Source: RMDB library OK1LIB, as collected in RNAgym. This 177-nucleotide RNA was probed chemically with 2A3. Values cover nucleotides 27 to 126. The 2A3 profile rests on 755 reads. Conditions: 150 mM KOAc, 10 mM MgCl2 and 150 mM bicine (pH 8.5), 24 C.

[RMDB]
RNA sequence: GGGAACGACUCGAGUAGAGUCGAAAAAGCGGGCGCUUCGUGCACGCCCAGCGACUGGCAAUUGUCGCGGGGUCUGGGCACAGUCCUGGGCAGCUCCCGUCACCUCGUUCGUGAUACGAUGGGGGUGGGCCCUGCCGUCCUUCGGGACGGUAGGGCCAAAAGAAACAACAACAACAAC
Reactivity to 2A3 in 0.01 (KOAc 150mM, MgCl2 10mM, bicine 150mM(pH8.5), 24C), signal-to-noise 2, nucleotides 027 to 126: a000g110c070g000g030g000c040g000c040u110u080c070g030u000g000c040a040c000g030c000c000c030a000g000c000g000a000c000u120g090g220c130a140a180u260u150g020u050c020g000c000g030g050g030g000u080c120u300g000g010g030c020a020c020a000g020u100c010c000u010g060g000g000c020a030g000c000u010c000c000c000g090u060c010a040c000c000u010c010g000u110u040c020g000u080g250a150u110a300c160g010a050u010g110g000g000g050g040u040g010